[RMDB]
RNA sequence: GGGAACGACUCGAGUAGAGUCGAAAACGGCAAGCAAAAAAAAAGUUCCAGCCGAGGCCUCCUCACCACGCGGCCUGGGUCUGAGGGUAACAUGGCCCUGCGGGAGAGAGCCAACACGGGGGGGCCCUGUCCCCAAUCAGUUCGCUGAUUGGGGACAAAAAGAAACAACAACAACAAC
Reactivity to 2A3 in 0.01 (KOAc 150mM, MgCl2 10mM, bicine 150mM(pH8.5), 24C), signal-to-noise 2, nucleotides 027 to 126: c040g010g000c030a010a030g000c080a070a050a000a040a050a020a000a080a000g030u030u000c020c000a010g000c010c010g040a050g000g000c000c000u000c000c000u000c000a100c080c000a100c070g060c030g060g000c000c020u100g050g060g040u040c010u030g030a040g010g050g020u120a100a040c090a210u140g130g000c010c010c000u090g160c020g020g030g000a030g000a000g000a000g020c000c010a040a020c100a010c070g010g000g000g000g000g000g000c000c010c000
Reactivity to DMS in 0.01 (KOAc 150mM, MgCl2 10mM, bicine 150mM(pH8.5), 24C), signal-to-noise 1, nucleotides 027 to 126: c010g000g000c010a090a080g000c160a000a000a000a000a000a010a020a030a130g020u000u000c000c060a270g000c050c000g000a090g000g000c020c000u000c000c000u020c030a220c060c060a190c140g000c300g000g000c040c020u000g050g000g030u020c030u020g000a050g000g000g020u000a080a100c230a050u080g030g040c050c000c030u020g000c090g000g090g000a170g020a010g000a130g010c010c010a080a110c190a130c170g000g010g020g020g000g000g050c010c030c030